[RMDB]
RNA sequence: GGGAACGACUCGAGUAGAGUCGAAAAGAUAUGGAUCUAUGCGUUUGAUGACCUAUUCUCGGAAACGAGAGAUAGCAAGAACAAUUAGAUCCUAAGUCAAACCUUCAAUGCUUCGGCAUUGAAGGAACAUUAGGCGAGAGUUCGCUCUCGCCUAAUGAAAAGAAACAACAACAACAAC
Reactivity to DMS in 0.01 (KOAc 150mM, MgCl2 10mM, bicine 150mM(pH8.5), 24C), signal-to-noise 4, nucleotides 027 to 126: g000a020u010a160u020g000g010a010u000c000u000a010u000g000c300g020u000u000u000g010a300u000g000a040c300c000u000a010u010u000c000u010c000g010g000a050a050a030c000g010a020g000a020g020a010u000a000g000c010a050a100g000a000a030c010a100a200u000u010a000g010a010u000c010c000u000a000a060g000u000c020a100a130a180c000c000u010u000c000a010a020u000g000c000u020u020c230g020g010c000a000u000u000g000a000a000g020g000a020a040
Reactivity to 2A3 in 0.01 (KOAc 150mM, MgCl2 10mM, bicine 150mM(pH8.5), 24C), signal-to-noise 3, nucleotides 027 to 126: g000a010u030a010u080g000g000a000u010c000u010a010u030g090c100g020u010u020u060g270a270u080g000a030c000c000u000a040u000u020c000u000c000g000g050a040a020a010c020g000a000g020a010g060a010u010a000g000c030a300a300g000a030a010c000a010a020u070u020a000g010a000u000c000c000u000a020a000g000u010c020a090a050a120c010c000u000u000c000a000a010u000g020c020u010u140c300g150g000c010a000u020u010g000a000a000g000g000a000a010